[RMDB]
RNA sequence: GGGAACGACUCGAGUAGAGUCGAAAAGAUAUGGAGGCAUACGAUAGAGCUGCUGCGAACUACAGACUGAUUCGGAAACGAAUCUGUCUGCGCAGCGUUAAGGCUCUAUCGUAUGCCUCCUAAGUCAGUUAGUAACAAACUUCGGUUUGUUACUAACAAAAGAAACAACAACAACAAC
Reactivity to DMS in 0.01 (KOAc 150mM, MgCl2 10mM, bicine 150mM(pH8.5), 24C), signal-to-noise 4, nucleotides 027 to 126: g010a050u010a300u030g010g000a020g000g020c000a010u000a010c000g010a020u000a020g010a010g040c000u000g010c010u010g010c000g000a090a100c130u020a300c000a000g010a030c000u010g000a020u010u000c010g010g000a100a080a230c000g010a030a000u000c000u000g010u010c000u000g000c020g000c010a000g000c020g000u010u040a080a180g000g020c000u000c000u000a000u000c000g000u010a000u000g000c000c000u000c000c000u000a000a040g010u010c060a160